[RMDB]
RNA sequence: GGGAACGACUCGAGUAGAGUCGAAAACGAUCAGCUUGUAAUUGCCGCCCAUCACUGCCUUGAAGGGGGAGAUCAUAUCACCGAUCACAUAUUCGGGCGCAUCGUGCAGGAGCGCCAGCAUCUGCCAGCUAUUAUGGGAUUUCGAUCCCAUAAUAGCAAAAGAAACAACAACAACAAC
Reactivity to DMS in 0.01 (KOAc 150mM, MgCl2 10mM, bicine 150mM(pH8.5), 24C), signal-to-noise 5, nucleotides 027 to 126: c090g010a080u000c080a120g010c040u000u020g010u010a080a090u000u010g030c060c030g000c040c030c030a050u010c110a060c120u010g010c040c030u000u010g020a090a080g000g010g010g020g030a130g020a020u010c040a080u010a130u000c100a090c110c070g000a040u000c070a100c160a100u000a120u000u000c040g010g000g010c030g010c100a050u000c110g030u010g010c080a060g020g000a090g010c040g010c050c060a060g000c080a040u000c040u000g010c050c100a130
Reactivity to 2A3 in 0.01 (KOAc 150mM, MgCl2 10mM, bicine 150mM(pH8.5), 24C), signal-to-noise 4, nucleotides 027 to 126: c040g010a060u070c020a030g070c040u110u150g070u170a090a100u140u100g040c020c020g070c020c000c000a010u080c020a010c050u070g030c010c020u060u130g060a080a080g020g000g000g040g000a090g030a030u050c020a050u090a050u140c050a040c070c040g030a030u050c020a030c030a140u190a090u120u090c040g000g010g000c010g020c030a110u070c050g060u070g030c030a020g060g010a060g030c010g000c010c000a000g000c000a030u000c010u040g040c030c010a010
An RNA of 177 nucleotides, treated with DMS and 2A3 and read out base by base. For 2A3, 7,458 sequencing reads were counted. Conditions: 150 mM KOAc, 10 mM MgCl2 and 150 mM bicine (pH 8.5), 24 C. Reactivities are given for positions 27 through 126.